[RMDB]
RNA sequence: GGGAACGACUCGAGUAGAGUCGAAAAGAUAUGGAGGCUUGGGCGAUAAGGAUCAAUCGGAAACGAUUGAAUCCUUUUGACGCCUCGUCUCCUAAGUCAAAGGUAAAGCACUUCGGUGCUUUACCAAUCUCUACCACAACUUCGGUUGUGGUAGAGAAAAAGAAACAACAACAACAAC
Reactivity to DMS in 0.01 (KOAc 150mM, MgCl2 10mM, bicine 150mM(pH8.5), 24C), signal-to-noise 2, nucleotides 027 to 126: g000a020u000a120u020g000g000a000g000g000c000u000u020g000g000g000c000g010a160u000a010a010g000g000a010u000c000a000a010u000c000g010g000a020a020a060c000g010a000u000u010g000a020a060u000c000c000u010u000u000u000g030a180c070g010c000c000u000c300g020u000c020u000c000c010u000a000a070g000u010c010a070a120a120g010g000u000a000a000a000g000c010a000c000u000u010c260g000g010u000g020c000u000u000u000a000c000c000a060a030
Reactivity to 2A3 in 0.01 (KOAc 150mM, MgCl2 10mM, bicine 150mM(pH8.5), 24C), signal-to-noise 2, nucleotides 027 to 126: g000a010u020a000u060g000g000a020g000g000c160u300u290g160g050g030c020g140a150u120a300a000g000g000a000u000c010a000a000u000c000g000g060a000a010a050c010g000a020u000u010g000a010a050u010c010c000u000u040u020u190g080a030c010g030c000c010u000c030g020u000c000u000c030c000u010a020a000g020u020c040a080a040a170g000g010u020a020a000a000g000c000a020c010u060u140c300g090g000u000g020c000u000u010u010a000c000c000a010a000
Source: RMDB library TTRDEL, as collected in RNAgym. Structure probing data (DMS and 2A3) for a 177-nucleotide construct. The RNA was probed in 150 mM KOAc, 10 mM MgCl2 and 150 mM bicine (pH 8.5) at 24 C. For 2A3 the reverse transcriptase was SuperScript II with manganese. For DMS, 1,861 sequencing reads were counted. Values are in units of 0.01, from 0 to 300, in steps of 10.